[RMDB]
Structure probing data (DMS and 2A3) for a 177-nucleotide construct. The DMS profile rests on 1,586 reads. The reactions ran in a buffer of 150 mM KOAc, 10 mM MgCl2 and 150 mM bicine (pH 8.5), at 24 C. In probing experiments dimethyl sulfate is read out at A N1 and C N3, which are open when not base-paired.
RNA sequence: GGGAACGACUCGAGUAGAGUCGAAAAGUUGAGUCUGUGAAGGCCGCCAGGUGUCUCCUCCUUCUGGGCGACUCCAUCACAACAGACCACAUCAGUCCAGCAGGAGACAUUGCAAAGAACUCUCCUGUCUCAAUAAGCCAUUCGUGGCUUAUUGAGAAAAAGAAACAACAACAACAAC
Reactivity to DMS in 0.01 (KOAc 150mM, MgCl2 10mM, bicine 150mM(pH8.5), 24C), signal-to-noise 3, nucleotides 027 to 126: g020u000u000g010a230g020u000c010u010g000u000g020a140a200g010g000c150c010g010c030c060a070g000g000u000g000u000c040u000c010c040u000c090c050u000u000c040u020g000g010g060c020g000a040c070u000c100c080a110u000c070a090c130a130a090c070a070g000a060c030c030a040c070a080u000c100a090g010u000c010c040a160g000c070a010g010g010a040g000a010c120a110u010u010g010c180a060a050a100g010a140a100c210u000c010u000c010c000u000g000
Reactivity to 2A3 in 0.01 (KOAc 150mM, MgCl2 10mM, bicine 150mM(pH8.5), 24C), signal-to-noise 1, nucleotides 027 to 126: g040u040u030g020a010g020u000c010u020g010u000g120a160a070g000g000c050c020g010c020c020a040g020g040u030g050u040c030u060c030c030u050c040c050u100u090c010u060g070g030g050c010g030a010c030u060c030c020a090u110c030a030c030a090a150c010a010g020a000c000c010a040c010a100u080c040a000g040u000c010c030a000g000c020a020g020g000a030g030a020c050a060u000u220g030c070a180a070a020g020a150a120c010u020c000u000c000c000u000g080

2A3 adducts were read by reverse transcription with SuperScript II with manganese.